[RMDB]
An RNA of 177 nucleotides, treated with 2A3 and DMS and read out base by base. DMS adducts were read by reverse transcription with MarathonRT.

RNA sequence: GGGAACGACUCGAGUAGAGUCGAAAAAUGAUAGAUUCAGGAGCUCGAGGUAAUAAGUCUCAGUUGAAGCAGUUAGGAGCUCUACGAGGUUUAAUGGCUAAGCCAAACGGUGCGAUUAUCGAAUCUCCGUCUUGUAGACGUUCGCGUCUACAAGACGAAAAGAAACAACAACAACAAC
Reactivity to 2A3 in 0.01 (KOAc 150mM, MgCl2 10mM, bicine 150mM(pH8.5), 24C), signal-to-noise 1, nucleotides 027 to 126: a000u110g000a020u040a050g070a070u050u110c060a060g060g050a000g050c010u010c070g080a010g000g020u140a120a170u040a070a040g010u050c000u020c010a000g000u010u030g060a110a020g000c040a040g040u050u200a140g060g080a090g000c000u000c010u010a000c010g020a010g080g000u040u020u110a140a040u080g050g000c060u100a010a110g070c030c020a030a030a060c080g010g060u070g010c060g050a080u140u030a090u140c070g010a040a020u010c020u000c010
Reactivity to DMS in 0.01 (KOAc 150mM, MgCl2 10mM, bicine 150mM(pH8.5), 24C), signal-to-noise 2, nucleotides 027 to 126: a120u010g010a190u000a050g000a080u010u000c020a100g030g010a220g000c050u000c060g010a150g000g010u010a080a140u000a060a100g000u000c010u000c020a230g000u000u010g000a060a090g020c060a070g020u010u010a080g000g030a110g000c000u000c010u000a050c060g010a000g000g020u000u000u000a090a080u030g020g010c060u010a060a140g020c020c010a060a080a090c050g010g000u000g020c040g010a140u000u000a060u030c100g010a050a050u000c020u010c040
Source: RMDB library OK2TST, as collected in RNAgym.
2A3 adducts were read by reverse transcription with SuperScript II with manganese.